Description: This 177-nucleotide RNA was probed chemically with DMS and 2A3. For DMS, 2,156 sequencing reads were counted. It was measured as part of the RMDB library TTRDEL. The reactions ran in a buffer of 150 mM KOAc, 10 mM MgCl2 and 150 mM bicine (pH 8.5), at 24 C.
RNA sequence: GGGAACGACUCGAGUAGAGUCGAAAAGAUAUGGAGUGUACCGAGUAGUGUGAACUACGAUAUCUCGGAAACGAGUAAGUCGCACACGAAACUACACUCCUAAGUCAAAGUCCGCUUCGGCGGACAACUACUACGUAGCGUUCGCGCUACGUAGUAGAAAAGAAACAACAACAACAAC
Reactivity to DMS in 0.01 (KOAc 150mM, MgCl2 10mM, bicine 150mM(pH8.5), 24C), signal-to-noise 3, nucleotides 027 to 126: g000a030u000a300u010g020g000a010g010u000g000u010a020c250c050g020a050g010u000a090g000u000g000u000g000a150a050c140u010a290c000g000a050u000a240u000c000u000c000g000g010a080a070a210c000g000a010g000u000a110a160g030u000c040g000c000a010c000a000c000g000a120a090a100c080u000a000c010a010c000u000c000c000u000a010a020g000u000c030a110a060a130g000u000c000c000g010c010u000u010c130g040g000c010g000g000a000c000a010a070
Reactivity to 2A3 in 0.01 (KOAc 150mM, MgCl2 10mM, bicine 150mM(pH8.5), 24C), signal-to-noise 3, nucleotides 027 to 126: g050a020u070a050u170g010g010a000g010u010g000u010a040c150c100g010a040g000u050a020g000u000g010u010g060a120a080c140u130a030c300g000a000u020a050u090c000u000c010g020g020a050a050a050c020g000a000g020u060a230a140g020u020c030g030c030a000c000a000c000g010a010a000a010c020u010a000c000a000c010u030c000c000u020a090a020g000u000c010a120a040a110g010u000c000c010g000c000u020u090c200g190g000c000g010g020a000c000a000a000